[RMDB]
RNA sequence: GGGAACGACUCGAGUAGAGUCGAAAAUAUUCCGGUGUGGGAUACUUGGGAAUAUGUAACGCUAAUUGCAUAAGAUUGUAGGACGGAAUUUACAGUCUUGGUUUUUAUAAACCUGAAACUAAGUAAGAAUAGUAAGAGCGGUUCGCCGCUCUUACAACUGUGAGUCUAGGUUCGCCUAGACUCACAGAAAAGAAACAACAACAACAAC
Reactivity to 2A3 in 0.01 (KOAc 150mM, MgCl2 10mM, bicine 150mM(pH8.5), 24C), signal-to-noise 1, nucleotides 027 to 156: u070a020u080u000c020c040g040g090u190g010u100g010g160g020a000u020a100c000u010u050g020g000g020a030a030u020a030u040g020u060a040a060c100g040c270u120a120a120u170u060g030c010a020u030a100a000g010a010u000u040g030u020a010g000g090a020c050g010g030a010a030u040u060u020a020c010a000g010u020c000u010u010g000g030u020u000u000u000u120a230u150a060a020a000c010c030u000g060a090a030a060c020u010a030a050g050u010a040a080g060a180a080u090a060g000u000a000a000g000a000g010c010g030g030u020u020c170g020c010c010g000c000u010c000u000u000a000c000a000a000
The record gives the reactivity of an RNA of 207 nucleotides to 2A3.
2A3 adducts were read by reverse transcription with SuperScript II with manganese.
The RNA was probed in 150 mM KOAc, 10 mM MgCl2 and 150 mM bicine (pH 8.5) at 24 C.